[RMDB]
RNA sequence: GGGAACGACUCGAGUAGAGUCGAAAAAUUGUGCGGUCUCUGAGAGAGGAGAACCUGACUGAGAGAGCUUACCGCUUUUCAUAGUGGCUCUCUGAGAGACUCUGAGGCUCCUCUCGUUCCCAACCAACCUUUUUAUACAGUUCGCUGUAUAAAAAGGAAAAGAAACAACAACAACAAC
Reactivity to DMS in 0.01 (KOAc 150mM, MgCl2 10mM, bicine 150mM(pH8.5), 24C), signal-to-noise 4, nucleotides 027 to 126: a120u000u000g010u000g000c100g010g000u000c060u010c050u000g000a130g000a040g000a030g010g010a060g000a060a160c040c020u010g010a110c050u010g000a060g000a020g000a020g010c050u010u010a120c180c090g020c060u000u010u010u000c140a080u000a050g010u000g000g000c000u000c000u000c000u000g000a030g010a150g000a070c070u010c100u000g010a130g000g010c000u000c000c000u000c020u000c010g000u000u000c010c000c000a130a100c210c140a060a150
Reactivity to 2A3 in 0.01 (KOAc 150mM, MgCl2 10mM, bicine 150mM(pH8.5), 24C), signal-to-noise 6, nucleotides 027 to 126: a010u230u190g050u070g050c070g030g030u020c010u010c020u190g030a030g010a010g010a010g080g020a090g040a130a090c010c010u040g070a040c020u060g010a030g010a000g000a010g090c020u090u160a110c050c060g060c070u020u050u080u080c090a100u120a110g050u040g050g010c000u000c000u000c000u020g010a010g000a000g010a010c020u000c040u130g100a060g050g010c000u010c020c000u010c010u000c010g000u010u020c000c000c000a000a010c010c000a000a030
Source: RMDB library M2PK90, as collected in RNAgym.
The record gives the reactivity of an RNA of 177 nucleotides to DMS and 2A3.
For 2A3 the reverse transcriptase was SuperScript II with manganese.
The reactions ran in a buffer of 150 mM KOAc, 10 mM MgCl2 and 150 mM bicine (pH 8.5), at 24 C.
For DMS the reverse transcriptase was MarathonRT.
For DMS, 3,316 sequencing reads were counted.